[RMDB]
RNA sequence: GGGAACGACUCGAGUAGAGUCGAAAAGCGAACCCGUGAGUGGAACCUUGGUCUUUUAUUGGGGGGUACACUCGAGGAGUGGAAGGCGGGGAGGCGGGGUUCCCGGGCUUACCUACGGGAACUGCUGGAAGGGAGGGUUUCGACCCUCCCAAAAGAAACAACAACAACAAC
Reactivity to DMS in 0.01 (KOAc 150mM, MgCl2 10mM, bicine 150mM(pH8.5), 24C), signal-to-noise 3, nucleotides 027 to 129: g000c020g030a050a150c010c000c050g050u030g000a000g000u030g010g020a010a130c100c000u000u040g000g020u030c030u000u050u080u000a040u030u020g000g000g000g000g000g000u060a010c110a030c070u040c030g060a140g000g000a070g000u060g000g010a050a020g030g010c080g000g000g000g000a100g050g010c120g000g090g010g000u000u140c020c020c000g070g020g010c200u080u130a040c130c050u000a120c020g070g020g020a070a160c110u000g030c070u000g020g020a050a010
Reactivity to 2A3 in 0.01 (KOAc 150mM, MgCl2 10mM, bicine 150mM(pH8.5), 24C), signal-to-noise 2, nucleotides 027 to 129: g050c020g000a000a060c040c000c000g040u050g030a030g000u090g000g080a050a060c020c000u050u100g010g030u160c040u000u070u080u040a230u140u140g000g000g000g000g000g000u070a080c060a040c070u020c030g050a040g000g020a060g000u170g030g030a110a000g030g070c070g020g000g000g000a030g010g010c070g010g000g010g000u000u010c000c050c040g000g000g000c000u050u090a050c010c010u030a040c010g000g000g010a030a050c020u090g000c060u070g020g020a090a050